Structure probing data (2A3 and DMS) for a 207-nucleotide construct.
For 2A3, 2,145 sequencing reads were counted.
The reactions ran in a buffer of 150 mM KOAc, 10 mM MgCl2 and 150 mM bicine (pH 8.5), at 24 C.
The DMS profile rests on 2,558 reads.
[RMDB]
RNA sequence: GGGAACGACUCGAGUAGAGUCGAAAACUGCACGUAUGCCCCUACACUCCUUGAUCUUGGAGCGCAACCCCGCAUAUCCAUGCAGCUUGACAACCAGUGUCGCCCAUGAUGACACUCCCGAAAGCGGGACGUGACAACUGCACGUAUGCCCCUACACCACCAGAAGAAGGUUCGCCUUCUUCUGGUGAAAAGAAACAACAACAACAAC
Reactivity to 2A3 in 0.01 (KOAc 150mM, MgCl2 10mM, bicine 150mM(pH8.5), 24C), signal-to-noise 3, nucleotides 027 to 156: c020u030g040c030a030c130g080u090a060u200g020c000c000c000c020u120a030c020a010c070u050c000c010u090u160g080a150u200c050u070u090g030g040a010g040c000g000c030a050a140c030c000c020c010g000c000a030u030a000u090c040c020a020u040g000c000a010g000c080u060u070g080a070c070a050a040c050c020a070g010u010g010u040c010g020c020c090c030a090u160g040a030u060g010a020c000a000c020u040c000c010c020g100a220a220a050g190c130g000g000g020a020c030g030u030g020a050c010a080a070c070u110g000c000a010c040g010u010a020u140g080c000c000c000c000u030a020c010a040c040
Reactivity to DMS in 0.01 (KOAc 150mM, MgCl2 10mM, bicine 150mM(pH8.5), 24C), signal-to-noise 1, nucleotides 027 to 156: c030u000g030c070a070c150g020u010a030u000g060c000c010c010c020u000a110c030a060c030u000c000c040u000u030g020a120u010c120u000u010g000g000a090g010c040g000c080a110a170c060c000c000c030g000c050a020u000a030u000c090c100a130u010g010c010a060g000c020u000u000g010a240c070a040a130c010c070a140g000u000g040u000c000g030c030c070c100a180u000g010a100u000g010a040c030a020c010u010c000c000c020g030a130a190a170g010c050g020g000g040a040c120g020u010g020a140c050a070a080c060u000g000c030a040c010g030u000a070u010g000c000c000c010c030u010a070c060a120c070